[RMDB]
Source: RMDB library TTRDEL, as collected in RNAgym. The record gives the reactivity of an RNA of 177 nucleotides to DMS and 2A3. For 2A3 the reverse transcriptase was SuperScript II with manganese. Values cover nucleotides 27 to 126.

RNA sequence: GGGAACGACUCGAGUAGAGUCGAAAAGAUAUGGAAUAUCCUCUCGAUCGACGAAGUCGGAAACGACAGAGAUCACGCGAGAGGAGUAUUCCUAAGUCAAAGCAUACAGGGUUCGCCCUGUAUGCAAGAUGCCCUUUCAGUUCGCUGAAAGGGCAUCAAAAGAAACAACAACAACAAC
Reactivity to DMS in 0.01 (KOAc 150mM, MgCl2 10mM, bicine 150mM(pH8.5), 24C), signal-to-noise 2, nucleotides 027 to 126: g000a030u000a180u010g000g010a010a000u010a020u000c000c000u000c000u000c000g010a120u000c020g000a030c000g000a300a270g000u000c000g010g000a000a030a040c000g030a010c010a020g000a300g000a060u000c140a060c030g000c000g000a000g000a000g000g010a010g050u020a000u000u000c000c000u010a000a100g020u020c020a150a110a180g000c000a010u000a000c000a010g000g020g020u000u010c210g010c000c000c000u000g030u010a000u000g000c000a000a010
Reactivity to 2A3 in 0.01 (KOAc 150mM, MgCl2 10mM, bicine 150mM(pH8.5), 24C), signal-to-noise 2, nucleotides 027 to 126: g000a000u000a010u050g000g000a000a000u020a050u020c040c020u000c010u020c000g300a300u020c010g020a010c010g010a040a030g020u020c000g010g030a000a000a000c000g000a000c000a010g030a010g010a020u090c200a030c070g040c000g010a000g000a000g000g000a000g000u000a000u000u010c000c000u000a020a000g000u000c050a140a040a070g000c000a000u000a000c000a000g050g000g030u060u140c210g170c040c010c010u000g010u020a000u000g030c000a000a010